[RMDB]
RNA sequence: GGGAACGACUCGAGUAGAGUCGAAAAUGAAGGCAUGGUUCCUCCAGAAACUGAUGUUCAACUGGCACUGACCGCCAACCUGAAUGACACACUGACAUUCAAGGACUGUGUUAUUUUGGACAUUGAAGCACCAACAGCUAUUCGUAGCUGUUGGUGCAAAAGAAACAACAACAACAAC
Reactivity to DMS in 0.01 (KOAc 150mM, MgCl2 10mM, bicine 150mM(pH8.5), 24C), signal-to-noise 2, nucleotides 027 to 126: u010g000a120a090g010g050c070a060u020g060g000u000u010c030c010u050c120c050a070g000a160a070a060c180u000g000a000u000g050u000u000c020a030a070c300u000g000g010c000a030c040u000g010a060c130c060g000c060c070a070a100c140c010u000g000a020a000u010g000a070c010a050c170a120c110u000g010a130c050a080u000u000c020a040a130g010g000a110c080u000g020u000g020u010u010a030u000u000u000u000g020g000a030c020a030u000u030g000a050a090
Reactivity to 2A3 in 0.01 (KOAc 150mM, MgCl2 10mM, bicine 150mM(pH8.5), 24C), signal-to-noise 2, nucleotides 027 to 126: u040g000a080a050g050g110c130a110u120g080g020u110u000c030c000u030c000c000a040g200a040a050a050c070u090g000a050u030g020u010u000c000a010a050c010u000g000g000c000a010c030u030g110a190c040c020g000c080c010a040a040c010c040u010g000a000a000u040g030a010c030a010c030a080c100u150g040a060c010a030u010u020c010a080a110g020g040a040c040u080g020u010g010u020u000a130u010u070u010u000g000g010a020c000a030u030u080g090a020a020
An RNA of 177 nucleotides, treated with DMS and 2A3 and read out base by base. For DMS, 833 sequencing reads were counted. DMS adducts were read by reverse transcription with MarathonRT. The reactions ran in a buffer of 150 mM KOAc, 10 mM MgCl2 and 150 mM bicine (pH 8.5), at 24 C. Source: RMDB library OK2TRN, as collected in RNAgym. For 2A3 the reverse transcriptase was SuperScript II with manganese. High 2A3 reactivity points to a flexible backbone, as in loops and unpaired stretches.